[RMDB]
RNA sequence: GGGAACGACUCGAGUAGAGUCGAAAAAACAAGCAUAAUGUCAUUUGAACAACUUGCCAUCGAAUUAGCUGGUCAUGAAGUGGAUGCUAAUACCAUUGCUUCAUGGGUGCAGGCAUUUGCGUACCAAGACAUAGGAGGCUUUCGAGCCUCCUAUGUCAAAAGAAACAACAACAACAAC
Reactivity to DMS in 0.01 (KOAc 150mM, MgCl2 10mM, bicine 150mM(pH8.5), 24C), signal-to-noise 1, nucleotides 027 to 126: a100a000c080a040a200g000c020a030u010a000a040u000g000u010c010a120u010u000u020g010a110a020c070a130a050c070u000u000g020c010c010a020u010c050g000a140a060u000u000a110g020c050u020g000g000u000c010a010u000g000a020a010g010u010g000g010a020u000g010c020u010a130a090u000a100c300c000a010u000u000g000c000u010u000c010a030u000g000g000g050u000g000c110a100g000g000c020a030u010u000u000g000c050g020u000a160c010c010a100a140
Reactivity to 2A3 in 0.01 (KOAc 150mM, MgCl2 10mM, bicine 150mM(pH8.5), 24C), signal-to-noise 1, nucleotides 027 to 126: a030a010c050a020a010g000c010a010u050a150a000u060g000u060c060a120u070u100u300g050a070a020c050a000a070c040u110u160g000c020c010a020u080c020g110a170a260u090u020a200g090c050u060g050g080u030c020a000u010g020a010a010g010u040g140g030a010u000g010c010u000a020a020u080a090c010c000a010u010u010g000c010u000u020c000a000u010g000g050g010u040g000c060a040g040g010c010a000u010u010u010g000c000g050u010a080c030c040a090a050
Structure probing data (DMS and 2A3) for a 177-nucleotide construct. For 2A3, 1,012 sequencing reads were counted. DMS adducts were read by reverse transcription with MarathonRT. The RNA was probed in 150 mM KOAc, 10 mM MgCl2 and 150 mM bicine (pH 8.5) at 24 C.